[RMDB]
This 177-nucleotide RNA was probed chemically with 2A3 and DMS.
DMS adducts were read by reverse transcription with MarathonRT.
Conditions: 150 mM KOAc, 10 mM MgCl2 and 150 mM bicine (pH 8.5), 24 C.
It was measured as part of the RMDB library OK1LIB.

RNA sequence: GGGAACGACUCGAGUAGAGUCGAAAACGGCAGUGGCAUCCUAUCCCUACGUUAUGUGGGGUGUCGCUUCCUAUAAGCGUAGAAGCGACGACCGUAGAUGUGCAAGUGAGUAUCCCUGCUCCUAGCGUCUACUGAUGCUGUUCGCGGCAUCGGUAGAAAAAGAAACAACAACAACAAC
Reactivity to 2A3 in 0.01 (KOAc 150mM, MgCl2 10mM, bicine 150mM(pH8.5), 24C), signal-to-noise 8, nucleotides 027 to 126: c020g040g030c040a050g040u060g070g010c010a040u040c000c020u060a070u060c000c000c010u010a010c030g100u160u170a090u230g020u020g000g010g000g000u020g000u000c000g000c000u000u000c010c010u060a050u030a190a040g070c050g040u050a010g000a010a000g000c000g000a000c000g020a020c000c020g020u020a020g010a070u060g020u050g040c010a030a040g030u050g110a020g010u020a050u050c000c000c000u010g010c000u000c000c000u010a010g020c000g020
Reactivity to DMS in 0.01 (KOAc 150mM, MgCl2 10mM, bicine 150mM(pH8.5), 24C), signal-to-noise 9, nucleotides 027 to 126: c070g000g010c090a060g010u010g010g000c030a040u000c040c070u000a070u030c010c000c000u000a020c030g010u030u040a050u050g010u000g010g010g000g010u020g010u000c000g000c000u000u000c110c060u010a080u020a080a130g020c230g010u010a050g000a040a020g000c000g000a010c010g010a110c090c060g010u010a040g010a070u010g000u010g010c030a080a050g010u040g010a040g000u000a080u010c010c010c000u010g000c010u000c000c010u000a060g010c050g000